[RMDB]
Background: The record gives the reactivity of an RNA of 207 nucleotides to 2A3. The reactions ran in a buffer of 150 mM KOAc, 10 mM MgCl2 and 150 mM bicine (pH 8.5), at 24 C. 2A3 is a SHAPE reagent: it acylates the 2'-hydroxyl of flexible nucleotides of all four kinds. Source: RMDB library OK3TST, as collected in RNAgym.

RNA sequence: GGGAACGACUCGAGUAGAGUCGAAAAGAGGGUUUAAGUGUGAACAGACUUUAGUUCUAAAACAAUCACUGUGGCUGCUGUGUUGCGAACAAACUAAACUGUAGGGGACAAGAGGGCUGACCCAGCGAGAGCAGUCAGGGGGUUCCCGCAGUGAUCAGUAAUUUACGGCAUUCGUGCCGUAAAUUACAAAAGAAACAACAACAACAAC
Reactivity to 2A3 in 0.01 (KOAc 150mM, MgCl2 10mM, bicine 150mM(pH8.5), 24C), signal-to-noise 1, nucleotides 027 to 156: g000a020g000g030g000u060u030u070a020a020g030u000g000u010g060a020a010c020a060g050a060c010u200u210u200a080g020u090u000c090u090a030a050a060a000c050a040a030u180c050a030c050u030g000u050g050g070c060u030g000c010u000g080u000g020u050u020g030c010g040a030a010c050a000a120a050c000u200a030a300a000c020u020g020u090a250g040g000g000g030a000c010a100a030g010a130g180g000g010c040u000g040a070c030c010c070a000g040c020g000a000g020a050g120c000a000g000u000c010a010g050g010g000g000g010u000u000c000c000c010g000c010a000g000u020g010a060u120c020a000